[RMDB]
RNA sequence: GGGAACGACUCGAGUAGAGUCGAAAAGGAACUAUGUUCUCACCUGAAGCCUCCACAGGACCGCGAAAGCGAUCGGAAACGAAUGAGCAUAGUUCCGAGCUGAAGGAGGCACGGCUCAAAAUAAAAACGAGCUAGAUGUGUUCGCACAUCUAGUUCGAAAAGAAACAACAACAACAAC
Reactivity to 2A3 in 0.01 (KOAc 150mM, MgCl2 10mM, bicine 150mM(pH8.5), 24C), signal-to-noise 2, nucleotides 027 to 126: g000g000a000a000c000u000a000u040g000u280u070c130u000c000a090c000c000u000g060a300a050g000c000c000u010c000c000a010c000a020g040g020a040c070c020g030c010g050a110a070a030g010c030g030a070u120c040g040g060a020a040a020c040g030a080a060u090g000a000g000c000a000u000a000g000u010u000c000c000g000a000g000c000u020g020a130a060g000g010a000g000g000c010a010c010g010g020c000u000c000a020a060a000a000u070a010a020a000a010a010